[RMDB]
RNA sequence: GGGAACGACUCGAGUAGAGUCGAAAAUUAGAGGCAUCGGGGGCGCAACGCCCUCGACCUAUUCUCAAACUUUAAAUAGGUAGGACGGCACGGCUGCUCCGGUGAGCCGUGCCAUGGAAUCGGGAGCCCUGAUAUAAGUCUUCGGACUUAUAUCAGGAAAAGAAACAACAACAACAAC
Reactivity to DMS in 0.01 (KOAc 150mM, MgCl2 10mM, bicine 150mM(pH8.5), 24C), signal-to-noise 2, nucleotides 027 to 126: u000u020a100g030a030g010g010c130a120u000c010g000g020g010g000g020c010g010c240a090a050c160g050c020c000c000u010c000g010a010c030c000u000a040u000u000c010u000c020a080a090a170c100u020u000u010a040a070a120u000a040g000g010u010a070g000g010a080c120g010g000c010a010c010g000g030c010u000g010c030u000c110c090g010g010u010g010a020g020c000c000g020u000g000c000c000a000u010g030g000a120a090u020c110g030g020g000a120g010c160
Reactivity to 2A3 in 0.01 (KOAc 150mM, MgCl2 10mM, bicine 150mM(pH8.5), 24C), signal-to-noise 2, nucleotides 027 to 126: u110u010a040g000a000g100g000c060a050u040c020g010g000g010g000g020c030g000c040a110a020c170g010c030c000c000u000c020g000a000c000c010u020a070u050u020c010u000c000a050a130a140c100u190u130u120a100a170a130u110a090g050g080u000a020g060g110a010c060g000g000c000a000c000g000g020c000u010g020c010u000c040c140g200g010u050g100a020g000c000c010g040u010g000c000c000a000u000g000g020a060a070u080c060g000g010g000a010g040c020